[RMDB]
RNA sequence: GGGAACGACUCGAGUAGAGUCGAAAAAAGCACAGAGUUGGAUCAUGAGGCCCAAAUGAAAGUAUGGGCUUCUUGAUUCCUAAAGUGGGGCGGAUCGCAUGAGGCUGGCUUCACAGAGCAAUGAACAGCUCCCGCUCUGUGCAGUGGAAGGUUAACGGUUCAUGUUCAUGUUCGCAUGAACAUGAACAAAAGAAACAACAACAACAAC
Reactivity to 2A3 in 0.01 (KOAc 150mM, MgCl2 10mM, bicine 150mM(pH8.5), 24C), signal-to-noise 1, nucleotides 027 to 156: a000a000g050c000a000c000a000g040a000g000u080u170g050g000a000u030c000a020u020g000a000g000g010c000c000c000a020a040a000u210g020a220a090a000g030u070a170u090g000g000g010c000u000u000c000u010u000g000a010u000u090c000c000u090a080a040a000g070u240g020g000g000g000c000g040g000a140u130c050g000c120a040u070g010a010g060g100c000u010g050g000c070u210u130c030a030c010a100g000a000g030c020a060a020u100g030a030a010c020a070g010c000u000c000c000c000g030c000u000c000u000g020u000g000c000a000g010u020g030g040a100a050g030g000u030u140a080a000c040g040
Background
An RNA of 207 nucleotides, treated with 2A3 and read out base by base. Reactivities are given for positions 27 through 156. Reactivities are rounded to 0.1 and cut off at 0 and 3.